[RMDB]
RNA sequence: GGGAACGACUCGAGUAGAGUCGAAAAUAGGAGUUAGGGGAGACCGAAGCGAGGAGGAAAGCAAAGAAAGCAACGGGGCUAGCCGGUAGGUGUUCCGCCUCCCGAGAGGGGACGAGUGAGGCUUAUCGCUUUAUUAUGGGUUCGCCCAUAAUAAAGCAAAAGAAACAACAACAACAAC
Reactivity to DMS in 0.01 (KOAc 150mM, MgCl2 10mM, bicine 150mM(pH8.5), 24C), signal-to-noise 1, nucleotides 027 to 126: u030a090g020g000a040g010u000u010a080g000g000g050g000a170g000a080c080c060g020a130a120g010c080g010a060g020g030a060g010g000a040a090a130g050c050a070a090a050g000a040a100a050g010c080a090a160c110g000g000g020g000c050u000a120g030c100c020g000g020u010a020g020g020u030g020u010u010c060c030g010c010c010u000c030c030c040g000a120g010a060g000g000g010g000a040c080g020a110g010u000g020a050g000g020c010u000u000a090u010c130